[RMDB]
RNA sequence: GGGAACGACUCGAGUAGAGUCGAAAAGACUGGCUGUCAAGGCACGGAGCCGUCCAGAGCACCUCAUCCUUAGCCUUUUUUGGCUAUACAUAUCGCGAUAUGUAGCGCUGUUAUGGAUGAAAUUAGAGGGUUCCGAUUUGUUCGCAGGUCGGAACCCAAAAGAAACAACAACAACAAC
Reactivity to DMS in 0.01 (KOAc 150mM, MgCl2 10mM, bicine 150mM(pH8.5), 24C), signal-to-noise 9, nucleotides 027 to 126: g000a100c050u020g030g010c040u000g000u010c080a110a080g000g010c050a110c090g010g010a090g000c020c020g010u010c030c040a070g000a110g010c100a100c070c050u010c020a030u000c000c000u000u010a020g000c000c070u000u020u020u030u060u010g000g010c000u000a050u010a020c040a010u010a020u010c090g010c210g010a080u010a030u010g000u000a040g000c070g000c070u000g000u010u010a060u000g000g000a020u000g000a040a070a090u030u020a060g010a300
Reactivity to 2A3 in 0.01 (KOAc 150mM, MgCl2 10mM, bicine 150mM(pH8.5), 24C), signal-to-noise 9, nucleotides 027 to 126: g080a020c080u080g010g030c020u030g050u190c070a140a150g080g020c060a040c120g070g030a020g010c010c000g020u020c010c010a020g000a020g080c040a050c020c010u010c000a020u020c000c010u030u050a010g010c020c000u070u100u040u030u180u160g010g000c000u010a010u010a030c010a010u040a010u060c040g020c060g150a020u020a020u140g060u060a030g030c030g010c080u050g030u140u060a060u110g030g010a020u020g040a030a050a050u190u140a080g050a120

Conditions: 150 mM KOAc, 10 mM MgCl2 and 150 mM bicine (pH 8.5), 24 C. Structure probing data (DMS and 2A3) for a 177-nucleotide construct. The 2A3 profile rests on 44,998 reads. DMS adducts were read by reverse transcription with MarathonRT. It was measured as part of the RMDB library OK1LIB. For DMS, 52,123 sequencing reads were counted.